[RMDB]
Chemical mapping of a 177-nucleotide RNA with DMS and 2A3. 2A3 adducts were read by reverse transcription with SuperScript II with manganese. 2A3 is a SHAPE reagent: it acylates the 2'-hydroxyl of flexible nucleotides of all four kinds. High DMS reactivity at an A or C suggests that its Watson-Crick edge is free. It was measured as part of the RMDB library OK1LIB. Conditions: 150 mM KOAc, 10 mM MgCl2 and 150 mM bicine (pH 8.5), 24 C.

RNA sequence: GGGAACGACUCGAGUAGAGUCGAAAAUGGUCGAAGACGUUAACUACACGAUGGUGACCGAUCUGCAAAUCUCCGAGCGCAGCAAAGCGGCCGUCACUACCGACAAUAUUGCCGCCCUGAAACAGGGACUCAUUAUCAGUUUCGACUGAUAAUGAGUAAAAGAAACAACAACAACAAC
Reactivity to DMS in 0.01 (KOAc 150mM, MgCl2 10mM, bicine 150mM(pH8.5), 24C), signal-to-noise 9, nucleotides 027 to 126: u020g000g010u010c010g010a110a050g010a090c050g010u010u010a080a090c180u030a100c140a050c060g010a060u010g010g010u040g000a040c050c020g000a080u010c040u000g000c070a060a100a100u020c030u010c030c050g000a100g010c110g010c020a040g000c140a050a090a120g010c020g000g010c030c120g010u000c030a080c080u020a110c120c050g000a020c060a070a130u040a110u020u010g000c020c030g010c000c010c010u000g010a100a080a090c120a060g000g000g020
Reactivity to 2A3 in 0.01 (KOAc 150mM, MgCl2 10mM, bicine 150mM(pH8.5), 24C), signal-to-noise 9, nucleotides 027 to 126: u130g030g010u030c030g040a080a030g120a080c040g020u080u110a130a070c090u110a040c110a020c100g100a110u070g030g050u060g030a020c010c020g010a100u020c020u040g020c030a050a060a110u040c060u010c040c020g050a040g040c050g000c020a030g020c020a080a050a040g030c020g010g010c020c020g030u030c010a020c080u100a060c020c030g060a050c050a060a100u120a100u160u200g040c020c020g040c000c000c000u070g050a160a090a030c050a040g010g000g030